[RMDB]
RNA sequence: GGGAACGACUCGAGUAGAGUCGAAAAGAUAUGGAGUACAUAUCUUUUGACGGAUACUCGGAAACGAGCUAUCCGAUAAGAUAGUACUCCUAAGUCAAACGGAACGGUAGUUCGCUACCGUUCCGAAUCAUGUAAUCAUGUUCGCAUGAUUACAUGAAAAAGAAACAACAACAACAAC
Reactivity to DMS in 0.01 (KOAc 150mM, MgCl2 10mM, bicine 150mM(pH8.5), 24C), signal-to-noise 9, nucleotides 027 to 126: g000a020u000a240u010g000g000a020g010u000a010c000a100u000a010u000c000u000u000u010u010g010a200c080g000g000a020u000a020c000u000c000g000g000a050a040a110c000g010a010g010c300u000a000u000c000c000g010a070u000a030a020g010a010u000a020g000u000a010c000u000c000c000u000a010a050g010u000c020a080a130a240c020g000g000a010a010c000g000g010u000a010g010u000u010c250g010c000u000a000c000c000g000u000u000c000c000g000a010a040
Reactivity to 2A3 in 0.01 (KOAc 150mM, MgCl2 10mM, bicine 150mM(pH8.5), 24C), signal-to-noise 9, nucleotides 027 to 126: g010a000u020a020u090g000g010a010g000u020a010c110a270u030a120u020c020u030u160u070u200g200a030c010g000g000a000u000a010c000u000c010g000g010a030a020a010c000g000a000g000c090u010a000u000c000c010g000a070u060a150a000g000a000u000a000g000u000a000c000u000c000c000u000a030a010g000u000c020a080a040a080c010g000g000a000a000c000g010g000u010a010g020u070u080c300g010c100u010a000c000c000g000u000u000c000c000g000a000a010

Record summary
An RNA of 177 nucleotides, treated with DMS and 2A3 and read out base by base. Values cover nucleotides 27 to 126. It was measured as part of the RMDB library TTRDEL. For DMS, 35,448 sequencing reads were counted.